[RMDB]
RNA sequence: GGGAACGACUCGAGUAGAGUCGAAAAGCAUAAGCUGCCUGCCUGGGUGAUGAAAGGCGGUACUUAUACUCCCGCACAAACCGUAACGUUGGGAGAUGAGACGUAUCAGGUGAUGAGCGCGUGCAAACCAUUCGCUGUUAUUCGUAACAGCGAAUGGAAAAGAAACAACAACAACAAC
Reactivity to 2A3 in 0.01 (KOAc 150mM, MgCl2 10mM, bicine 150mM(pH8.5), 24C), signal-to-noise 3, nucleotides 027 to 126: g000c000a020u040a100a020g010c030u050g000c020c020u050g010c000c010u040g050g000g070u200g100a250u120g130a120a090a030g130g000c010g030g000u040a050c000u020u010a000u010a110c020u000c030c010c000g020c010a060c050a040a140a080c110c050g130u170a100a070c070g060u160u230g020g000g000a060g000a000u040g010a010g000a020c030g010u060a060u160c040a020g000g070u040g030a140u130g020a030g060c010g000c020g020u010g020c000a050a030a050
Reactivity to DMS in 0.01 (KOAc 150mM, MgCl2 10mM, bicine 150mM(pH8.5), 24C), signal-to-noise 4, nucleotides 027 to 126: g010c020a020u000a040a110g000c140u000g010c070c010u020g020c030c000u030g040g030g030u010g010a140u020g010a100a100a080g010g000c010g010g010u000a020c030u000u000a010u000a070c030u000c000c010c000g020c100a130c180a070a080a080c080c120g000u000a130a100c100g020u000u010g030g000g000a050g010a070u000g010a040g010a050c040g010u000a100u000c070a080g030g020u000g000a050u010g000a090g010c050g000c150g030u000g010c040a090a120a260